[RMDB]
RNA sequence: GGGAACGACUCGAGUAGAGUCGAAAAAAUGAAAGUUCACCCGCUAGCGAGGUAUAGAGUUCCUAUGCGUUGAUUGGAUUCGCUAUCCAUAGGAACUUCAUACCGUGCUCUUGGAUGGCUUUCCAAACUCACAAUUUACGUUCGCGUAAAUUGUGAGAAAAGAAACAACAACAACAAC
Reactivity to 2A3 in 0.01 (KOAc 150mM, MgCl2 10mM, bicine 150mM(pH8.5), 24C), signal-to-noise 1, nucleotides 027 to 126: a000a050u270g030a050a000a000g020u300u250c010a000c000c000c000g010c040u000a000g000c000g040a030g010g020u000a020u030a010g020a010g010u040u020c010c010u000a000u020g050c100g090u070u090g040a100u030u130g140g050a150u210u150c040g000c100u070a040u050c000c010a000u000a000g000g010a010a010c000u020u020c010a000u010a010c030c000g060u070g000c010u000c030u030u000g010g010a000u000g020g000c000u030u000u000c040c020a090a040a020